Chemical mapping of a 177-nucleotide RNA with DMS and 2A3. Conditions: 150 mM KOAc, 10 mM MgCl2 and 150 mM bicine (pH 8.5), 24 C. It was measured as part of the RMDB library OK2TST. Reactivities are given for positions 27 through 126. For 2A3, 49,390 sequencing reads were counted. For 2A3 the reverse transcriptase was SuperScript II with manganese. The DMS profile rests on 40,671 reads. High DMS reactivity at an A or C suggests that its Watson-Crick edge is free. Values are in units of 0.01, from 0 to 300, in steps of 10.
RNA sequence: GGGAACGACUCGAGUAGAGUCGAAAAGGCUCGCCGAGAAGGUCUUGAGGAGGAUGUCGAUACGUCCGGGCUGGGAGAGGAUCUGGGUGAAGUGAGACUGCCGGGAGAGGCCUUCGGAUGUCUCCGAGAUACAGAAGAUAUUCGUAUCUUCUGUAUCAAAAGAAACAACAACAACAAC
Reactivity to DMS in 0.01 (KOAc 150mM, MgCl2 10mM, bicine 150mM(pH8.5), 24C), signal-to-noise 9, nucleotides 027 to 126: g010g010c010u000c030g010c020c020g010a080g000a080a210g010g010u000c020u000u000g010a140g010g010a180g020g010a030u000g010u000c300g010a160u010a070c060g020u000c010c010g000g000g000c110u000g000g010g000a090g000a130g000g010a070u000c100u000g000g000g010u000g010a070a080g010u010g000a100g000a050c040u000g010c040c030g000g000g010a150g010a100g010g000c040c030u000u000c050g010g000a140u000g000u000c020u000c010c040g000a140
Reactivity to 2A3 in 0.01 (KOAc 150mM, MgCl2 10mM, bicine 150mM(pH8.5), 24C), signal-to-noise 9, nucleotides 027 to 126: g010g000c000u010c010g000c010c010g020a030g010a060a020g010g000u010c010u050u100g080a090g040g050a040g030g010a040u050g040u090c080g070a070u070a280c030g020u000c020c000g000g020g020c110u120g020g020g030a150g010a040g040g020a090u060c050u140g030g000g020u070g060a090a040g060u070g100a030g010a020c030u070g050c030c000g010g030g010a110g010a030g040g070c010c000u050u040c010g010g010a030u050g020u010c010u000c020c020g060a070